[RMDB]
Chemical mapping of a 207-nucleotide RNA with 2A3 and DMS. The RNA was probed in 150 mM KOAc, 10 mM MgCl2 and 150 mM bicine (pH 8.5) at 24 C. DMS (dimethyl sulfate) methylates the pairing face of unpaired adenines and cytosines. For 2A3 the reverse transcriptase was SuperScript II with manganese.

RNA sequence: GGGAACGACUCGAGUAGAGUCGAAAAAAGCUAAUGCAUAUGGGCUUGAAAAACCCCAUGAAAGCUUGAAUUAACACUGAACUAAAGAUGUCAUCAUAGUGAACCCAUUAGGUUUAAGUGAAUAACAGGUAUCUAAAGGGAAGGGAAAUCAAUUCCAAGCGCUAUUUAAGUUCGCUUAAAUAGCGCUAAAAGAAACAACAACAACAAC
Reactivity to 2A3 in 0.01 (KOAc 150mM, MgCl2 10mM, bicine 150mM(pH8.5), 24C), signal-to-noise 2, nucleotides 027 to 156: a000a000g070c070u110a160a000u100g050c000a030u050a050u160g000g000g000c000u040u010g040a060a030a000a020a000c020c000c000c010a030u090g000a080a090a000g000c000u000u020g020a040a030u110u030a090a000c060a010c040u020g020a080a000c010u030a210a030a000g000a040u020g010u030c010a000u060c000a010u090a090g150u080g070a020a040c000c050c080a050u090u170a090g030g020u000u060u020a030a010g010u000g020a040a030u070a070a050c030a080g000g030u050a030u000c020u090a060a000a060g000g010g010a020a040g040g000g000a110a060a000u070c030a010a120u040u000c000c030a050
Reactivity to DMS in 0.01 (KOAc 150mM, MgCl2 10mM, bicine 150mM(pH8.5), 24C), signal-to-noise 1, nucleotides 027 to 156: a070a000g020c000u000a070a050u010g030c030a150u000a110u020g000g000g060c000u000u000g000a110a070a120a050a140c010c000c000c050a140u000g000a050a110a130g020c010u000u000g000a060a210u010u000a060a090c110a110c030u000g000a280a200c050u000a060a220a040g000a070u000g020u000c050a190u000c030a040u020a080g010u010g000a060a040c050c000c030a190u020u030a090g000g040u010u010u010a060a290g060u000g000a140a040u000a030a070c030a070g000g000u010a010u000c000u010a040a110a090g010g040g010a060a120g000g000g000a050a120a100u000c110a090a150u000u000c040c000a100